The record gives the reactivity of an RNA of 207 nucleotides to 2A3 and DMS. The DMS profile rests on 1,629 reads. It was measured as part of the RMDB library OK3TST. 2A3 adducts were read by reverse transcription with SuperScript II with manganese. For DMS the reverse transcriptase was MarathonRT. Values cover nucleotides 27 to 156. The 2A3 profile rests on 1,291 reads. Reactivities are rounded to 0.1 and cut off at 0 and 3.
RNA sequence: GGGAACGACUCGAGUAGAGUCGAAAAGAGAGAAAUGGUAUUAAGUGACAAAAGGGAGAAGGCAGCAGAGAGGGAAAAUAUAAAUGCUAUUCAGUGAGACUUGAGCUGUAAAGUAAAUGUUCAGGACAUCUCUGCCCUUCAGCUGGCCAAGGACACAAUUACCAGGCUAUUUCGAUAGCCUGGUAAUAAAAGAAACAACAACAACAAC
Reactivity to 2A3 in 0.01 (KOAc 150mM, MgCl2 10mM, bicine 150mM(pH8.5), 24C), signal-to-noise 2, nucleotides 027 to 156: g040a000g020a010g000a020a140a030u080g000g010u050a070u110u120a130a030g020u060g030a030c030a020a150a040a050g010g010g030a110g000a060a020g030g000c020a020g060c010a000g020a010g000a010g040g000g020a020a070a100a020u130a000u010a010a090a050u210g020c020u050a110u080u210c020a020g030u000g030a040g040a070c030u050u060g020a010g000c000u000g040u200a040a130a030g010u030a050a140a110u080g000u040u020c010a030g000g090a030c010a170u010c010u010c020u030g020c010c000c000u020u020c010a010g000c040u030g040g000c020c010a020a020g000g000a000c000a000c010a060
Reactivity to DMS in 0.01 (KOAc 150mM, MgCl2 10mM, bicine 150mM(pH8.5), 24C), signal-to-noise 1, nucleotides 027 to 156: g020a190g000a100g000a140a080a030u000g000g040u000a000u000u000a100a020g010u030g000a100c070a040a040a060a180g000g010g010a190g000a150a050g040g020c130a110g000c060a080g040a150g010a030g020g000g000a070a020a020a020u000a080u000a060a080a120u000g000c050u000a090u000u010c060a020g050u000g020a060g030a070c100u000u000g020a190g050c000u000g000u050a030a070a050g000u000a040a090a070u010g010u000u000c060a080g000g070a130c030a020u000c030u000c010u000g000c040c020c030u000u000c010a070g040c140u000g000g020c000c060a010a070g000g010a050c030a020c100a070